[RMDB]
RNA sequence: GGGAACGACUCGAGUAGAGUCGAAAACUUCAGCACGAAAUGCGUCCAGAAAUUCGCACUCACAGCUAAACCACGAGCACGAACCAUCGCAGCAUGCUCCAUGACAGCAUCAACACUGUUCCGCGCACUCCACAAACCAGUCACAGCGAACUUCGUGCACCACUUGCAGGUUCGCCUGCAAGUGGUGAAAAGAAACAACAACAACAAC
Reactivity to 2A3 in 0.01 (KOAc 150mM, MgCl2 10mM, bicine 150mM(pH8.5), 24C), signal-to-noise 2, nucleotides 027 to 156: c010u110u120c050a010g030c000a020c070g070a000a070a170u110g020c060g060u020c010c000a080g150a010a090a050u100u050c010g000c000a000c000u060c000a090c000a060g020c060u110a130a100a050c030c010a000c070g010a000g020c020a010c080g040a040a040c090c030a030u000c040g000c070a020g020c030a020u080g030c020u070c050c030a070u070g000a100c010a030g000c000a060u040c030a060a030c010a000c090u080g050u080u020c000c010g010c000g010c030a020c020u020c000c030a090c010a090a090a040c030c060a000g040u040c040a010c090a080g000c040g020a030a020c020u040u020c010g030u070g020

Structure probing data (2A3) for a 207-nucleotide construct. The data come from the RNA Mapping Database (RMDB), library OK3TST.